[RMDB]
RNA sequence: GGGAACGACUCGAGUAGAGUCGAAAAUGGACUUUUUACAGUUCCUACUUAUCCGGUUUUAACGCUGUUUUAUUGGCGCAAAGGUUUACGGAUAAACAACUAAUAAUUAAACCUUUUGUGUGCGUAAAUUGGACGUUUAGGUUCGCCUAAACGUCAAUCCUACUUGUAACUUCGGUUACAAGUAGGAAAAAGAAACAACAACAACAAC
Reactivity to 2A3 in 0.01 (KOAc 150mM, MgCl2 10mM, bicine 150mM(pH8.5), 24C), signal-to-noise 2, nucleotides 027 to 156: u130g050g030a070c050u150u200u150u150u130a110c190a080g020u050u090c000c000u050a110c070u040u030a000u000c000c000g050g000u000u040u000u110a100a020c020g000c010u040g190u180u120u120u130a170u080u170g080g000c020g040c010a010a010a000g000g000u020u000u000a000c000g030g000a010u060a030a110a000c040a080a000c050u190a020a130u120a150a010u150u110a020a000a000c010c000u010u070u080u090g090u000g000u020g060c070g020u110a080a140a080u070u110g130g020a000c000g000u010u010u010a000g020g000u000u030c100g040c020c000u000a010a000a000c000g000u000c000a000a000
Reactivity to DMS in 0.01 (KOAc 150mM, MgCl2 10mM, bicine 150mM(pH8.5), 24C), signal-to-noise 2, nucleotides 027 to 156: u010g040g010a080c060u000u010u020u010u000a060c070a110g000u010u000c000c070u010a110c110u000u010a030u000c020c000g000g000u000u000u010u000a250a090c020g020c020u010g020u020u000u020u020a160u010u040g010g000c030g010c010a030a030a040g040g010u000u000u000a120c010g010g000a030u000a030a060a250c050a060a140c100u000a040a160u000a050a150u000u000a000a060a010c000c000u010u000u000u000g000u000g000u000g020c010g010u000a060a050a110u030u010g000g010a020c010g000u010u000u010a000g000g010u000u000c300g010c000c000u000a000a000a010c000g020u000c010a010a050